[RMDB]
RNA sequence: GGGAACGACUCGAGUAGAGUCGAAAAGAUAUGGAUGAGGGCCAUCGAUCUAGGCUACCCACCUCGGAAACGAGAGGCCUAGGGAGGCUGACCUCAUCCUAAGUCAAAACGGAUGUUCGCAUCCGAACGUUCAUCAGGAGUUCGCUCCUGAUGAACGAAAAGAAACAACAACAACAAC
Reactivity to DMS in 0.01 (KOAc 150mM, MgCl2 10mM, bicine 150mM(pH8.5), 24C), signal-to-noise 2, nucleotides 027 to 126: g010a080u010a250u010g000g010a000u000g000a010g000g050g020c080c040a070u000c010g020a260u020c000u000a000g000g000c020u000a050c020c030c110a300c100c000u020c010g000g000a090a100a210c020g000a000g030a110g020g000c030c000u000a040g000g000g000a200g030g000c290u000g000a160c020c010u000c000a020u000c000c000u000a000a080g000u000c030a050a020a080a170c010g000g000a000u000g020u000u030c210g020c010a000u000c000c000g000a020a080
Reactivity to 2A3 in 0.01 (KOAc 150mM, MgCl2 10mM, bicine 150mM(pH8.5), 24C), signal-to-noise 1, nucleotides 027 to 126: g080a050u110a050u190g000g000a020u000g020a050g050g020g000c100c010a120u300c090g010a000u000c010u000a010g010g000c020u090a170c100c020c010a100c040c010u000c000g010g010a070a080a050c010g000a010g000a040g060g010c030c000u010a000g000g010g000a030g000g030c000u100g120a060c010c000u000c000a010u000c000c000u010a030a020g070u030c060a050a010a110a090c000g010g000a010u030g030u120u170c300g000c130a010u000c000c010g030a080a040
Structure probing data (DMS and 2A3) for a 177-nucleotide construct. DMS adducts were read by reverse transcription with MarathonRT. It was measured as part of the RMDB library TTRDEL. For 2A3, 2,254 sequencing reads were counted.